[RMDB]
RNA sequence: GGGAACGACUCGAGUAGAGUCGAAAAGAAAGAAAGAAGAAUCACCAGGAGGCAAGGAUCCUCAACUACGUUAUUCGGGCACCUUGAGUUGAGAGGAGCUAGUGGUGCGCCCGGCCUGGAGAGCAAAACACGACAGGCGGGUUCGCCCGCCUGUCAAGCAUGAUGAUAACUUCGGUUAUCAUCAUGCAAAAGAAACAACAACAACAAC
Reactivity to 2A3 in 0.01 (KOAc 150mM, MgCl2 10mM, bicine 150mM(pH8.5), 24C), signal-to-noise 2, nucleotides 027 to 156: g030a000a130a040g060a050a090a010g070a010a020g020a070a100u060c020a010c050c010a000g030g010a030g020g020c050a060a120g040g000a030u020c010c000u000c000a000a020c010u210a030c050g140u190u060a080u120u160c010g000g000g040c020a020c030c080u060u170g050a000g030u010u040g010a010g010a010g010g000a010g000c000u040a010g070u030g050g000u030g000c000g010c020c020c000g010g000c000c000u010g010g010a050g000a000g030c080a030a030a030a030c050a010c090g000a000c000a000g000g000c030g010g000g020u040u010c060g050c010c000c000g000c000c000u000g000u010c000a000a000